Structure probing data (2A3 and DMS) for a 177-nucleotide construct.
DMS adducts were read by reverse transcription with MarathonRT.
RNA sequence: GGGAACGACUCGAGUAGAGUCGAAAAUCAAUGCGGGAGGUGCCCCAUUGACAAAUUGUGUUAAGAUGCUUACUCCUAAAACUGGUACAGGUAUAGCUAUAUCUGUUAAACCAGAGAGUACAGCUGAUCACCUUAGAUUGUUCGCAAUCUAAGGUGAAAAAGAAACAACAACAACAAC
Reactivity to 2A3 in 0.01 (KOAc 150mM, MgCl2 10mM, bicine 150mM(pH8.5), 24C), signal-to-noise 2, nucleotides 027 to 126: u020c000a020a030u050g010c090g000g050g000a200g200g150u220g110c010c040c000c000a030u010u020g000a000c010a010a140a050u180u070g090u000g130u170u140a090a010g040a050u090g010c000u000u020a000c010u000c000c020u060a040a050a060a160c010u020g000g000u010a000c010a000g020g010u000a020u010a050g100c170u100a030u000a000u000c010u000g020u030u150a060a030a000c000c000a010g020a000g000a000g000u000a040c060a050g000c000u000g000a040
Reactivity to DMS in 0.01 (KOAc 150mM, MgCl2 10mM, bicine 150mM(pH8.5), 24C), signal-to-noise 2, nucleotides 027 to 126: u000c010a040a010u000g000c190g040g000g010a300g030g020u010g010c000c010c010c000a000u020u000g030a030c130a070a070a150u000u030g000u000g030u000u000a110a060g000a220u010g020c000u000u000a020c010u000c010c230u010a030a060a120a300c030u000g010g030u000a040c000a010g000g040u000a000u010a110g020c180u010a060u000a020u000c000u000g000u000u000a030a050a000c000c000a030g010a080g000a000g040u010a000c220a020g010c010u000g000a140
Record summary:
2A3 adducts were read by reverse transcription with SuperScript II with manganese. The 2A3 profile rests on 1,037 reads. The RNA was probed in 150 mM KOAc, 10 mM MgCl2 and 150 mM bicine (pH 8.5) at 24 C. It was measured as part of the RMDB library 15KREP.